Overview: Structure probing data (DMS) for a 177-nucleotide construct. The data come from the RNA Mapping Database (RMDB), library OK2TST. Conditions: 150 mM KOAc, 10 mM MgCl2 and 150 mM bicine (pH 8.5), 24 C.
RNA sequence: GGGAACGACUCGAGUAGAGUCGAAAAGCCACCGGAAGCCAUGGGUUUACAGGGGCCAUAUCAGACGAUCCCGGAAUUUCCCGAUCAUUGGGAAGUGAUCGAGGCGGCGGAUGCUGAGCACCCGUUAUGGUGAGGAGGUAUUCGUACCUCCUCACCAAAAAGAAACAACAACAACAAC
Reactivity to DMS in 0.01 (KOAc 150mM, MgCl2 10mM, bicine 150mM(pH8.5), 24C), signal-to-noise 2, nucleotides 027 to 126: g010c000c030a080c030c060g030g000a070a110g000c030c050a150u000g040g020g000u000u000u000a040c140a040g020g000g000g020c030c050a050u000a040u000c040a060g000a160c120g020a070u000c000c020c000g010g000a140a060u000u010u000c000c000c000g000a070u000c080a090u010u000g020g030g000a140a030g020u000g000a030u000c030g050a100g020g020c160g020g040c070g000g010a090u000g020c050u000g000a090g020c100a110c010c010c050g020u010u000a100